RNA sequence: GGGAACGACUCGAGUAGAGUCGAAAAAAAAGCCUAUCUGACACAGACGUACACACCCCCUCUGUGGACUGGAGUGCACACAUUGCAGAUGCGGUGAAUCAGAAGAAAGUAUUCUUCCAAUACCAGGCCUAAACAGCACAUUCGUGUGCUGUUUAGGAAAAGAAACAACAACAACAAC
Reactivity to DMS in 0.01 (KOAc 150mM, MgCl2 10mM, bicine 150mM(pH8.5), 24C), signal-to-noise 1, nucleotides 027 to 126: a140a030a110a030g000c020c000u040a000u010c050u000g010a100c020a030c090a090g000a120c090g030u000a070c020a030c050a220c000c020c070c050c020u020c060u000g030u010g020g010a070c140u000g060g000a120g060u000g000c050a020c000a160c100a080u020u000g000c110a030g020a030u000g020c100g000g060u020g000a080a090u020c090a060g000a040a020g000a020a030a170g020u020a070u000u000c020u000u010c000c090a020a050u010a130c040c030a120g010g000
The data come from the RNA Mapping Database (RMDB), library OK2TRN. Chemical mapping of a 177-nucleotide RNA with DMS. The reactions ran in a buffer of 150 mM KOAc, 10 mM MgCl2 and 150 mM bicine (pH 8.5), at 24 C. For DMS the reverse transcriptase was MarathonRT.